[RMDB]
RNA sequence: GGGAACGACUCGAGUAGAGUCGAAAAGCAAUAUUCCAAUAAACACGGACUGCUGGGAGGCUGCUGUCCUCUGGAAGAUUAUAUCAAUUGGAACUCCUUGUUUGGAAGUGAGGCGAUUACCAGCCUGUGACAGGGAAUGCUUCGGCAUUCCCUGUCAAAAAGAAACAACAACAACAAC
Reactivity to DMS in 0.01 (KOAc 150mM, MgCl2 10mM, bicine 150mM(pH8.5), 24C), signal-to-noise 2, nucleotides 027 to 126: g020c170a040a040u040a060u000u000c000c040a080a050u000a090a110a170c130a070c180g000g000a010c110u000g030c030u040g030g000g000a070g000g020c050u040g010c160u010g000u000c000c000u000c040u010g000g020a060a180g000a020u000u010a050u070a290u040c010a040a060u000u000g000g000a070a120c150u000c000c020u010u010g000u010u010u030g020g010a010a080g020u010g000a050g020g000c020g000a110u030u040a200c120c010a220g010c000c040u010g020
Reactivity to 2A3 in 0.01 (KOAc 150mM, MgCl2 10mM, bicine 150mM(pH8.5), 24C), signal-to-noise 2, nucleotides 027 to 126: g050c070a010a000u020a060u260u060c020c000a020a070u140a030a200a030c130a010c070g050g000a010c000u090g050c030u040g040g070g080a030g070g000c000u040g000c030u060g010u020c010c000u040c020u000g050g010a110a000g020a070u080u080a090u070a010u120c060a140a180u090u020g030g010a000a030c040u020c000c000u010u060g150u130u060u030g080g090a090a010g040u090g170a030g030g010c030g090a000u030u220a050c000c000a060g020c000c040u060g040
Description
Structure probing data (DMS and 2A3) for a 177-nucleotide construct. DMS adducts were read by reverse transcription with MarathonRT. As a SHAPE reagent, 2A3 marks flexible, mostly unpaired nucleotides at the ribose 2'-OH. Conditions: 150 mM KOAc, 10 mM MgCl2 and 150 mM bicine (pH 8.5), 24 C. For DMS, 1,744 sequencing reads were counted. For 2A3 the reverse transcriptase was SuperScript II with manganese. Values cover nucleotides 27 to 126.